[RMDB]
RNA sequence: GGGAACGACUCGAGUAGAGUCGAAAAAAUAUUACGCCAUUUGCCUGCAUAUUCAAACAGCUCUUCUACGAUAAGGGCACAAAUCGCAUCGUGGAACGUUUGGGCUUCUACCGAUUUAGCAGUUUGACGACAACAACCUAUUCGUAGGUUGUUGUCGAAAAGAAACAACAACAACAAC
Reactivity to DMS in 0.01 (KOAc 150mM, MgCl2 10mM, bicine 150mM(pH8.5), 24C), signal-to-noise 2, nucleotides 027 to 126: a020a040u000a070u000u050a110c160g010c010c010a060u020u030u000g000c010c020u010g000c140a020u040a080u000u000c050a040a090a030c000a110g000c000u000c050u000u000c050u020a100c040g010a020u010a070a080g020g000g000c060a130c150a020a080a050u010c050g020c110a040u000c040g000u010g000g010a000a090c160g040u000u010u000g010g000g000c040u000u020c050u050a090c030c070g010a090u000u030u000a140g000c050a040g000u020u000u000g000a110
Reactivity to 2A3 in 0.01 (KOAc 150mM, MgCl2 10mM, bicine 150mM(pH8.5), 24C), signal-to-noise 5, nucleotides 027 to 126: a000a000u280a080u110u090a070c050g050c010c020a030u100u070u100g040c000c020u040g020c060a040u060a110u140u130c060a050a070a050c000a040g040c010u000c030u060u000c030u100a030c000g030a070u080a210a090g050g050g010c090a050c050a060a070a030u090c050g020c050a040u030c020g040u030g020g060a030a030c050g020u070u130u080g040g020g020c000u060u010c010u080a080c040c000g050a050u080u090u060a080g040c060a010g030u030u090u080g040a040